[RMDB]
RNA sequence: GGGAACGACUCGAGUAGAGUCGAAAACGCGCAGGUCGGCCAGGCGGUCGGCCACAUGGACGAGGUCACGCAGCGAAACGCGGCGCUCGUCGAAGAACUGGCGGCCGCGUCGCAGGCGAUGGCGCAAGCCCCACUCGUAGUUCGCUACGAGUGGGGCAAAAGAAACAACAACAACAAC
Reactivity to DMS in 0.01 (KOAc 150mM, MgCl2 10mM, bicine 150mM(pH8.5), 24C), signal-to-noise 2, nucleotides 027 to 126: c110g000c080g030c080a100g020g000u000c000g000g000c020c000a230g010g030c220g030g020u010c000g060g000c000c060a010c060a110u000g010g000a100c120g000a080g020g020u000c070a100c010g000c020a110g010c020g000a030a060a170c010g000c000g010g010c010g000c000u000c300g000u000c030g000a110a120g020a140a050c070u010g000g000c000g050g010c000c000g000c010g010u000c050g000c040a110g000g020c010g000a060u000g000g000c000g000c080a140a090
Reactivity to 2A3 in 0.01 (KOAc 150mM, MgCl2 10mM, bicine 150mM(pH8.5), 24C), signal-to-noise 1, nucleotides 027 to 126: c040g020c020g000c080a080g010g040u000c020g010g000c000c000a010g300g160c110g010g140u010c000g040g010c040c000a020c000a040u030g070g030a030c000g080a060g060g080u010c010a010c020g000c000a030g000c030g060a160a100a010c040g000c000g000g000c010g060c020u040c010g020u000c010g030a160a050g030a140a020c010u010g020g000c000g150g000c000c000g000c000g020u010c010g000c010a000g090g000c020g090a090u030g010g000c000g000c060a020a000